An RNA of 177 nucleotides, treated with 2A3 and DMS and read out base by base. Source: RMDB library TTRDEL, as collected in RNAgym. The DMS profile rests on 6,112 reads. In probing experiments dimethyl sulfate is read out at A N1 and C N3, which are open when not base-paired. The reactions ran in a buffer of 150 mM KOAc, 10 mM MgCl2 and 150 mM bicine (pH 8.5), at 24 C.
RNA sequence: GGGAACGACUCGAGUAGAGUCGAAAAGAUAUGGAGAGUUCCACCGUCCCAACAGCUCGGAAACGAGACAUGGGAUCGGUGGAGACUCUCCUAAGUCAAAACGUUGAUAGGUUCGCCUAUCAACGAACAUAGAAGAAUCCUUCGGGAUUCUUCUAUGAAAAGAAACAACAACAACAAC
Reactivity to 2A3 in 0.01 (KOAc 150mM, MgCl2 10mM, bicine 150mM(pH8.5), 24C), signal-to-noise 3, nucleotides 027 to 126: g010a010u070a030u200g000g010a000g000a000g010u020u010c000c000a000c000c000g020u010c000c010c000a070a080c120a080g090c000u010c010g020g040a100a080a050c010g010a000g040a040c040a080u080g000g020g010a060u260c140g000g010u010g010g000a000g000a000c000u000c000u020c000c000u000a010a000g040u010c020a020a020a070a140c020g010u000u000g010a000u000a010g000g080u060u070c300g110c060c000u000a010u010c010a000a000c000g000a010a010
Reactivity to DMS in 0.01 (KOAc 150mM, MgCl2 10mM, bicine 150mM(pH8.5), 24C), signal-to-noise 5, nucleotides 027 to 126: g000a030u000a300u020g000g000a020g000a010g000u000u000c010c000a010c010c000g020u010c000c000c000a030a090c260a150g000c000u000c000g010g000a140a090a190c010g010a020g000a040c070a160u000g010g010g000a000u020c040g040g010u000g000g000a020g010a020c000u000c000u000c000c000u000a020a060g000u010c040a080a080a090a170c010g010u000u000g010a020u000a010g010g010u000u020c230g010c000c000u000a000u000c000a000a000c000g000a030a070

Values are in units of 0.01, from 0 to 300, in steps of 10.